Structure probing data (DMS and 2A3) for a 177-nucleotide construct. For 2A3, 2,423 sequencing reads were counted. Source: RMDB library RFMREP, as collected in RNAgym. For 2A3 the reverse transcriptase was SuperScript II with manganese. Conditions: 150 mM KOAc, 10 mM MgCl2 and 150 mM bicine (pH 8.5), 24 C.
RNA sequence: GGGAACGACUCGAGUAGAGUCGAAAAAAUGGUUUGAUAACCAUGUGUAGGAUGCUGAUUUGAGCCUCUCCCAAUUCUCUAGUAGCCUCACUGGGCCAGGCAGCACUCAAUAUACCUCUUCACCACUCUAUUACCUAACGUUCGCGUUAGGUAAUAGAAAAGAAACAACAACAACAAC
Reactivity to DMS in 0.01 (KOAc 150mM, MgCl2 10mM, bicine 150mM(pH8.5), 24C), signal-to-noise 2, nucleotides 027 to 126: a050a000u000g000g000u010u000u010g040a160u020a080a070c010c000a010u000g030u000g030u000a060g010g010a090u000g000c040u010g010a140u020u010u000g000a120g010c040c020u000c090u010c010c010c020a100a150u000u000c030u010c000u000a090g010u000a100g010c070c060u000c050a090c090u000g010g000g000c040c020a030g010g000c020a050g020c070a020c020u000c040a040a050u010a060u000a070c020c030u010c080u010u000c040a100c030c030a130c210u000
Reactivity to 2A3 in 0.01 (KOAc 150mM, MgCl2 10mM, bicine 150mM(pH8.5), 24C), signal-to-noise 3, nucleotides 027 to 126: a000a020u100g020g040u070u020u120g160a170u180a120a000c010c000a010u030g050u020g050u080a030g000g100a080u070g030c030u020g030a300u110u090u140g030a040g010c000c000u020c010u000c050c000c010a010a090u160u030c030u010c020u040a060g050u070a020g060c000c000u030c010a090c060u060g030g000g040c000c010a010g000g000c000a010g040c020a020c020u010c010a050a010u080a020u040a140c000c000u010c010u070u030c070a070c090c000a050c040u000